[RMDB]
RNA sequence: GGGAACGACUCGAGUAGAGUCGAAAAGAAAUAAAUAGCAUCGUUACGUGAGCGCAAGAAGCACCGAAUGACGAAAGUCAGCGAUAAAAUUCGCUCAGAAGCGCAGAAAUGAUGCUUAAGGUGCGAAGGGAAUUCUUUAGUUCGCUAAAGAAUUCCCAAAAGAAACAACAACAACAAC
Reactivity to DMS in 0.01 (KOAc 150mM, MgCl2 10mM, bicine 150mM(pH8.5), 24C), signal-to-noise 2, nucleotides 027 to 126: g000a070a130a070u090a090a060a080u030a030g020c000a000u020c010g010u040u000a090c130g030u040g030a050g000c000g070c090a030a030g020a090a080g010c040a030c100c000g000a050a120u010g000a000c000g000a140a050a150g000u000c000a030g010c030g020a010u030a030a060a130a070u010u000c020g010c010u000c080a100g020a040a090g030c070g000c050a060g000a090a030a040u010g000a030u000g000c020u030u000a040a040g000g000u000g010c050g010a200a070
Reactivity to 2A3 in 0.01 (KOAc 150mM, MgCl2 10mM, bicine 150mM(pH8.5), 24C), signal-to-noise 3, nucleotides 027 to 126: g100a000a120a010u300a040a080a010u130a000g000c000a000u000c020g040u090u110a120c100g050u080g140a060g000c010g000c020a030a040g130a090a000g110c000a000c010c040g030a100a090u150g010a090c010g040a030a000a000g020u000c000a030g000c020g030a000u120a040a100a000a040u100u030c000g010c010u000c010a010g040a250a010g000c010g000c000a000g110a000a030a000u040g000a010u030g000c000u000u000a070a020g030g000u030g050c080g040a080a100